RNA sequence: GGGAACGACUCGAGUAGAGUCGAAAAGAUAUGGACGUUCAACAGCUACCCAUCGGAAACGAUGGUGUAGACAUGAACGGUCCUAAGUCAAAACGUCCACCCCAUCGUUCGCGAUGGGGUGGACGAAGGCAAUAUAUCUGUUCGCAGAUAUAUUGCCAAAAGAAACAACAACAACAAC
Reactivity to DMS in 0.01 (KOAc 150mM, MgCl2 10mM, bicine 150mM(pH8.5), 24C), signal-to-noise 1, nucleotides 027 to 126: g010a020u000a290u010g000g000a100c010g000u000u000c020a020a070c270a200g010c020u000a010c010c010c000a000u000c000g000g000a090a060a120c000g000a020u000g010g000u010g010u000a010g000a040c070a140u010g000a000a010c000g000g020u010c000c000u010a040a220g000u020c030a080a030a100a140c000g030u000c000c000a000c020c030c000c000a030u000c020g070u000u010c300g020c060g000a000u000g000g000g030g000u000g000g010a000c030g020a000a010
Reactivity to 2A3 in 0.01 (KOAc 150mM, MgCl2 10mM, bicine 150mM(pH8.5), 24C), signal-to-noise 2, nucleotides 027 to 126: g000a020u080a020u110g000g020a000c030g010u020u010c050a160a140c050a270g030c000u030a020c010c000c020a000u010c030g010g040a130a080a060c010g000a000u000g000g040u090g000u020a000g010a020c020a040u030g000a010a010c010g020g020u010c000c000u020a110a000g030u020c030a040a060a120a030c040g030u030c000c040a020c010c050c060c070a000u040c000g120u120u110c300g010c010g200a020u000g000g000g000g000u040g000g010a000c000g000a010a010

Chemical mapping of a 177-nucleotide RNA with DMS and 2A3.
2A3 adducts were read by reverse transcription with SuperScript II with manganese.
Source: RMDB library TTRDEL, as collected in RNAgym.
For DMS, 1,397 sequencing reads were counted.
The 2A3 profile rests on 2,934 reads.